Background
Chemical mapping of a 177-nucleotide RNA with DMS and 2A3. For DMS the reverse transcriptase was MarathonRT.

[RMDB]
RNA sequence: GGGAACGACUCGAGUAGAGUCGAAAAGAUAUGGAAGUUCGAAGAACAUGGAGCGUUCGGAAACGAAAGCGCUCCCAUGGGAGAACUUCCUAAGUCAAAGCCUAUUCGAGUUCGCUCGAAUAGGCAACCUUAGACCAAUCUUCGGAUUGGUCUAAGGAAAAGAAACAACAACAACAAC
Reactivity to DMS in 0.01 (KOAc 150mM, MgCl2 10mM, bicine 150mM(pH8.5), 24C), signal-to-noise 2, nucleotides 027 to 126: g020a020u010a300u030g000g000a000a000g020u000u050c010g000a160a200g040a140a150c000a010u000g020g010a050g010c000g020u010u000c010g010g020a100a080a190c040g010a030a050a110g010c020g000c000u010c200c050c020a020u000g000g000g000a120g000a020a000c010u000u010c000c000u010a010a060g030u000c020a120a080a170g000c000c000u010a010u000u000c000g010a020g010u000u000c270g000c020u000c010g000a010a020u000a000g000g000c000a000a010
Reactivity to 2A3 in 0.01 (KOAc 150mM, MgCl2 10mM, bicine 150mM(pH8.5), 24C), signal-to-noise 2, nucleotides 027 to 126: g000a030u060a030u240g000g010a000a000g000u000u000c070g130a300a060g050a150a040c010a010u030g000g020a000g010c000g030u050u020c050g020g080a110a070a070c010g030a220a130a050g200c020g050c010u080c140c020c000a000u010g000g010g000a030g000a000a000c000u000u010c000c000u010a080a030g020u000c040a070a060a040g000c000c000u010a010u000u000c010g000a010g050u070u090c130g150c080u000c000g000a000a000u000a010g000g010c000a000a000

The 2A3 profile rests on 2,715 reads. The RNA was probed in 150 mM KOAc, 10 mM MgCl2 and 150 mM bicine (pH 8.5) at 24 C. Source: RMDB library TTRDEL, as collected in RNAgym. For 2A3 the reverse transcriptase was SuperScript II with manganese. Reactivities are given for positions 27 through 126.